RNA sequence: GGGAACGACUCGAGUAGAGUCGAAAACUUCGAGAACGAAAUCGCGCUUUUCCGCGAGGAGAGGAUAGUACUCCUUGUACAUGUCCAACACGACCUGGGCGGGCAGGUGGACGAAAUUGCCCUCGACCAUGCCUAUUUGAUUCGUCAAAUAGGCAUGAAAAGAAACAACAACAACAAC
Reactivity to 2A3 in 0.01 (KOAc 150mM, MgCl2 10mM, bicine 150mM(pH8.5), 24C), signal-to-noise 7, nucleotides 027 to 126: c010u050u040c020g030a020g020a070a030c040g020a020a020a040u020c020g000c000g000c060u070u040u040u030c020c000g010c020g010a010g010g010a040g020a010g010g010a020u030a040g020u010a030c020u080c110c090u050u160g010u010a030c050a120u180g000u000c010c000a060a020c090a040c120g130a090c010c010u040g020g190g000c010g020g000g000c010a010g000g000u060g070g050a030c020g010a010a030a030u040u050g020c030c010c000u000c010g010a020c050
Reactivity to DMS in 0.01 (KOAc 150mM, MgCl2 10mM, bicine 150mM(pH8.5), 24C), signal-to-noise 9, nucleotides 027 to 126: c050u000u000c040g010a050g010a060a080c040g010a020a060a250u000c020g010c040g010c060u000u000u000u000c060c020g020c050g010a050g000g010a160g010a200g000g000a040u000a070g010u000a030c010u000c230c200u000u010g010u000a020c030a050u010g000u000c010c010a070a150c160a140c180g000a090c030c010u000g010g030g030c030g010g000g000c060a030g000g000u000g010g010a070c030g000a010a030a190u000u000g010c040c020c010u000c020g000a070c210
Conditions: 150 mM KOAc, 10 mM MgCl2 and 150 mM bicine (pH 8.5), 24 C.
Chemical mapping of a 177-nucleotide RNA with 2A3 and DMS.
It was measured as part of the RMDB library OK2TST.
High 2A3 reactivity points to a flexible backbone, as in loops and unpaired stretches.
For 2A3, 18,333 sequencing reads were counted.